[RMDB]
Conditions: 150 mM KOAc, 10 mM MgCl2 and 150 mM bicine (pH 8.5), 24 C. The record gives the reactivity of an RNA of 207 nucleotides to DMS and 2A3. High 2A3 reactivity points to a flexible backbone, as in loops and unpaired stretches. The 2A3 profile rests on 2,042 reads.

RNA sequence: GGGAACGACUCGAGUAGAGUCGAAAAGGGGUCGGUUGGGAGUCCAUAUAGACAGACAGGACAUGAGCUGAAGCCUCCACGGCUCAACAGCCUGUCCGAAUGGACGAGGAUCAACCGACGGAGGCACCCAAAACCCAGCUUGUUCGCAAGCUGGGAAGUUUAUUAAAUCCUUCGGGAUUUAAUAAACAAAAGAAACAACAACAACAAC
Reactivity to DMS in 0.01 (KOAc 150mM, MgCl2 10mM, bicine 150mM(pH8.5), 24C), signal-to-noise 1, nucleotides 027 to 156: g010g010g060g050u010c010g000g000u000u020g000g090g030a150g000u000c000c010a080u010a150u010a130g010a090c150a080g000a120c030a150g010g000a100c020a300u000g020a040g020c000u000g010a060a130g020c010c020u000c000c010a300c080g000g000c000u000c000a100a060c060a090g010c000c010u010g000u000c000c000g010a080a090u000g000g010a000c050g000a140g020g030a080u000c010a030a050c010c010g010a030c010g000g010a010g090g010c030a080c010c010c010a070a020a070a180c000c000c000a000g000c000u010u010g010u010u000c300g000c020a010a020g000c000u000g000g000g020a020a020
Reactivity to 2A3 in 0.01 (KOAc 150mM, MgCl2 10mM, bicine 150mM(pH8.5), 24C), signal-to-noise 2, nucleotides 027 to 156: g060g020g030g010u000c000g000g020u000u000g010g030g010a020g000u030c000c010a010u090a010u030a080g070a050c060a030g020a000c010a010g000g020a020c080a140u140g010a010g000c020u050g020a120a010g020c000c000u000c000c020a030c000g030g000c020u020c010a050a110c030a060g180c000c000u000g000u000c000c010g140a090a040u060g000g000a010c010g040a210g030g000a010u020c000a000a000c000c000g000a000c000g000g000a000g000g010c000a020c010c030c000a050a100a070a080c000c000c000a010g000c000u020u010g030u050u090c170g020c210a000a010g030c040u050g000g000g000a000a010

For DMS, 2,217 sequencing reads were counted. For 2A3 the reverse transcriptase was SuperScript II with manganese. It was measured as part of the RMDB library RNAMAK.